[RMDB]
RNA sequence: GGGAACGACUCGAGUAGAGUCGAAAAUGGUCAUUACCAAGGCUUUUAGAAUGCAGUUUCUCAUUUGCUGUGGACAUGACCAUAAAAAAAUUUCCCAGUAGGUUUUCUAUCUGCUACUUUGCUAGCAAAAUGGUUUUGAGUUCGCUCAAAACCAUUUAAAAGAAACAACAACAACAAC
Reactivity to 2A3 in 0.01 (KOAc 150mM, MgCl2 10mM, bicine 150mM(pH8.5), 24C), signal-to-noise 2, nucleotides 027 to 126: u010g020g010u000c010a000u060u030a100c010c000a060a170g030g000c010u000u030u000u000a000g010a040a010u240g220c150a190g080u010u020u000c000u000c000a020u010u030u120g000c030u030g040u080g050g010a040c000a050u020g000a010c000c000a000u000a000a040a000a000a000a010a010u040u010u020c000c000c010a020g130u060a020g000g030u130u000u070u010c010u030a190u050c070u080g010c000u000a020c040u190u170u300g050c080u030a000g010c000a000
Reactivity to DMS in 0.01 (KOAc 150mM, MgCl2 10mM, bicine 150mM(pH8.5), 24C), signal-to-noise 3, nucleotides 027 to 126: u000g000g000u000c000a030u000u000a300c000c010a050a280g010g020c000u020u000u000u020a040g010a010a000u010g000c230a160g030u020u000u000c000u000c170a000u000u000u000g020c000u030g040u050g000g010a150c260a030u000g000a010c000c000a010u010a000a000a020a160a070a110a080u000u030u000c000c000c020a130g000u020a070g000g010u000u030u040u010c030u000a080u030c160u010g010c000u010a010c010u090u020u030g050c300u000a000g020c000a020